[RMDB]
RNA sequence: GGGAACGACUCGAGUAGAGUCGAAAAGUUUAGAAGUUCGCUUCUAAACAAAUAGAUGGUACCUAUCAACCUUAUAUGUAGGUACCCAUCUAAGGUUGACAAAAACGUCCUCGUUCGCGAGGACGAAUCAUAGAUGGGCGUUCGCGCCCAUCUAUGAAAAAGAAACAACAACAACAAC
Reactivity to DMS in 0.01 (KOAc 150mM, MgCl2 10mM, bicine 150mM(pH8.5), 24C), signal-to-noise 1, nucleotides 027 to 126: g000u000u000u000a010g030a020a000g020u000u010c270g010c040u010u000c010u000a010a000a000c030a030a090a120u000a030g000a000u000g000g000u000a000c000c000u000a000u030c130a040a090c200c260u000u000a060u010a090u000g010u010a000g000g000u000a000c120c060c000a000u010c000u030a090a110g010g000u000u000g020a070c170a060a080a040a060a130c030g010u000c000c000u000c000g020u000u000c190g000c040g000a000g000g000a000c000g000a020a060